[RMDB]
RNA sequence: GGGAACGACUCGAGUAGAGUCGAAAAUUCGGUCAGAAAGGGCUUAUGCGUAUCGCAACUGCAUGUGGCUCCUCGUCAUGUUCUACGUCCUCCUCUGGCGACUAGAGGUGUGGAUACACAGCGUGCCCAGUCACUAUACUUUCGAGUAUAGUGACUGAAAAGAAACAACAACAACAAC
Reactivity to 2A3 in 0.01 (KOAc 150mM, MgCl2 10mM, bicine 150mM(pH8.5), 24C), signal-to-noise 9, nucleotides 027 to 126: u050u010c030g020g020u070c040a020g110a080a080a030g050g010g000c020u110u090a030u100g010c020g030u100a060u220c080g000c110a050a070c070u100g020c020a050u060g040u060g100g000c010u040c020c020u020c010g050u030c020a040u080g040u050u030c030u050a040c040g030u030c010c000u020c000c010u020c030u030g030g020c080g070a070c040u070a010g010a020g050g010u050g030u060g060g040a020u070a080c060a000c000a020g060c030g060u050g020c020c000
Reactivity to DMS in 0.01 (KOAc 150mM, MgCl2 10mM, bicine 150mM(pH8.5), 24C), signal-to-noise 9, nucleotides 027 to 126: u010u000c050g010g020u000c070a090g010a070a100a100g010g010g010c050u000u000a070u010g010c020g020u010a080u010c140g010c110a080a100c100u000g010c060a040u000g010u000g010g010c020u000c050c040u000c080g010u000c050a070u000g010u000u000c050u000a090c150g000u000c030c020u000c030c050u000c030u000g010g010c170g000a080c090u010a070g000a040g010g010u000g020u000g010g010a070u000a060c070a050c080a060g000c070g010u000g000c030c030